This 207-nucleotide RNA was probed chemically with 2A3 and DMS. For 2A3 the reverse transcriptase was SuperScript II with manganese. The DMS profile rests on 4,048 reads. Reactivities are given for positions 27 through 156.
[RMDB]
RNA sequence: GGGAACGACUCGAGUAGAGUCGAAAAGAUGGGAACUGAUGAUGAAGACAAAAGAACACACCAGAAAGCUUUAUCAGAUGAAUGAUUUGUGUAUUGAAAAGAAGAAACUUGAUUCUCGGUUGAAUACACUACAGAAUCAGCAGGGCAAUGCCUUCCACUCAUUAUGGUCAUUCGUGACCAUAAUGAGAAAAGAAACAACAACAACAAC
Reactivity to 2A3 in 0.01 (KOAc 150mM, MgCl2 10mM, bicine 150mM(pH8.5), 24C), signal-to-noise 5, nucleotides 027 to 156: g060a030u090g020g010g030a040a050c030u030g000a020u030g000a010u030g020a050a010g050a030c080a030a100a020a030g090a090a030c060a010c000a020c040c050a030g100a070a080a020g020c010u060u080u070a060u090c040a060g040a130u070g040a150a080u090g030a040u020u110u100g000u010g000u020a030u010u050g100a070a040a030a050g110a040a010g010a020a040a040c050u110u100g030a050u140u000c020u010c010g100g000u020u060g020a020a010u060a020c020a010c020u100a040c020a050g080a030a020u030c000a020g040c020a010g030g020g000c040a050a030u080g030c000c000u060u020c010c000a040
Reactivity to DMS in 0.01 (KOAc 150mM, MgCl2 10mM, bicine 150mM(pH8.5), 24C), signal-to-noise 2, nucleotides 027 to 156: g030a110u000g020g010g010a110a160c050u000g010a080u000g000a120u010g010a140a110g000a150c020a030a110a080a220g010a130a080c040a070c060a090c030c020a100g000a060a070a080g010c020u000u000u010a060u010c060a040g040a090u000g000a070a080u000g010a100u010u000u010g000u000g020u010a050u000u010g000a100a080a050a130g020a040a050g000a090a060a080c110u000u010g000a140u000u010c000u000c030g000g030u000u010g000a070a070u000a070c050a030c000u000a170c060a100g000a030a030u000c010a050g000c070a120g020g010g000c020a030a040u000g000c030c030u000u000c030c070a130